[RMDB]
RNA sequence: GGGAACGACUCGAGUAGAGUCGAAAAGCUGCGUGAGUUAUUGUAAAUGGCGCUGCGAUCCACGUCUUGUCGCAAAUCAACAAGAGAUUGAUCACGUAGCGUCCCGGUUGGCCCUUCGGUCGGCUGGUCAUGGUACGCUGUUCGCGGCGUGCCAUGAAAAAGAAACAACAACAACAAC
Reactivity to 2A3 in 0.01 (KOAc 150mM, MgCl2 10mM, bicine 150mM(pH8.5), 24C), signal-to-noise 9, nucleotides 027 to 126: g020c010u030g010c010g020u030g020a070g050u180u130a130u150u120g130u150a060a110a120u140g020g000c010g000c020u020g000c020g010a040u040c030c020a040c020g060u010c030u040u070g040u040c040g000c080a030a030a080u070c020a010a090c020a090a010g050a010g030a170u020u080g010a020u020c000a000c030g000u000a000g000c000g000u000c000c000c000g000g010u000u010g010g000c010c000c020u090u100c100g010g020u010c000g010g000c010u020g020g030
Reactivity to DMS in 0.01 (KOAc 150mM, MgCl2 10mM, bicine 150mM(pH8.5), 24C), signal-to-noise 9, nucleotides 027 to 126: g010c000u000g010c010g010u000g000a060g010u010u010a070u000u020g020u010a060a100a100u020g010g010c060g000c100u010g000c040g000a050u000c090c090a070c100g000u020c040u010u010g000u010c060g010c100a050a080a100u020c110a060a050c050a080a070g010a130g010a120u020u010g000a110u010c020a020c020g010u000a010g000c000g020u000c000c000c000g000g000u000u010g010g000c000c020c130u020u020c130g020g020u010c070g000g000c020u010g000g010